RNA sequence: GGGAACGACUCGAGUAGAGUCGAAAAUGUCACCAUCUGACGUCGCCGAGGCCAUGUCUCGCCACGGUAUGACGCGGCUUUAUGCCGCCCUCCAUCUUCCGCCCGAGGUCUUGUUGCCCCCUGGCACCCACCCAUUUCUGUUCGCAGAAAUGGGUGGAAAAGAAACAACAACAACAAC
Reactivity to DMS in 0.01 (KOAc 150mM, MgCl2 10mM, bicine 150mM(pH8.5), 24C), signal-to-noise 1, nucleotides 027 to 126: u000g000u010c050a110c060c080a050u020c110u000g010a120c070g030u010c000g010c010c000g000a080g000g020c020c130a110u000g000u000c080u000c130g010c010c020a040c050g010g000u000a070u000g010a050c070g020c030g010g020c040u000u000u010a110u030g010c000c000g010c000c090c000u000c020c020a060u000c050u000u000c030c050g000c020c010c050g000a070g020g020u000c040u020u020g010u010u000g000c060c020c010c030c030u000g000g000c070a140c230
Reactivity to 2A3 in 0.01 (KOAc 150mM, MgCl2 10mM, bicine 150mM(pH8.5), 24C), signal-to-noise 1, nucleotides 027 to 126: u130g030u030c030a010c120c010a070u040c070u110g080a030c020g000u030c050g000c030c000g000a020g000g040c040c030a200u200g070u080c100u000c110g050c000c000a050c030g000g090u140a200u240g010a010c000g000c010g020g020c000u150u250u060a180u300g000c000c000g040c010c010c010u040c010c010a070u000c040u060u010c000c030g020c000c010c010g020a010g030g060u060c030u090u130g100u050u130g110c000c020c040c000c000u010g030g000c000a060c010

Chemical mapping of a 177-nucleotide RNA with DMS and 2A3. The RNA was probed in 150 mM KOAc, 10 mM MgCl2 and 150 mM bicine (pH 8.5) at 24 C. For 2A3, 975 sequencing reads were counted. For 2A3 the reverse transcriptase was SuperScript II with manganese. For DMS, 1,724 sequencing reads were counted.